[RMDB]
RNA sequence: GGGAACGACUCGAGUAGAGUCGAAAAGAGGCGCUUCAGGGUCUUGGUCGUCUGGUCGCCAAGUACGGCUGCCACGUGCAGUCACACGUGUCGGAGAGCGACUGGGAGCAUCACCACGUGUUGGAGCACCUACGCUACCUUUCGAGGUAGCGUAGGUAAAAGAAACAACAACAACAAC
Reactivity to DMS in 0.01 (KOAc 150mM, MgCl2 10mM, bicine 150mM(pH8.5), 24C), signal-to-noise 3, nucleotides 027 to 126: g010a100g020g000c090g020c020u000u000c040a090g010g010g000u000c020u000u000g020g040u000c060g010u000c040u000g010g000u010c040g010c020c010a110a110g010u020a080c160g000g000c040u000g010c030c010a090c230g030u020g000c040a080g010u010c110a120c020a020c010g000u010g000u000c040g010g000a120g010a180g010c040g010a030c060u010g000g000g010a070g000c060a070u000c050a150c060c010a020c090g010u000g020u010u010g010g010a050g000c070
Reactivity to 2A3 in 0.01 (KOAc 150mM, MgCl2 10mM, bicine 150mM(pH8.5), 24C), signal-to-noise 3, nucleotides 027 to 126: g080a040g060g040c040g010c070u050u050c030a040g050g040g080u000c010u030u040g000g050u060c030g040u010c040u030g070g010u050c010g000c000c010a030a000g020u040a030c050g020g000c000u000g000c000c030a200c120g100u190g030c020a030g020u030c020a010c000a010c060g090u090g030u090c040g040g030a060g020a010g080c010g050a030c030u020g010g000g040a050g060c020a030u050c010a020c030c010a040c070g050u080g060u030u050g020g010a000g040c020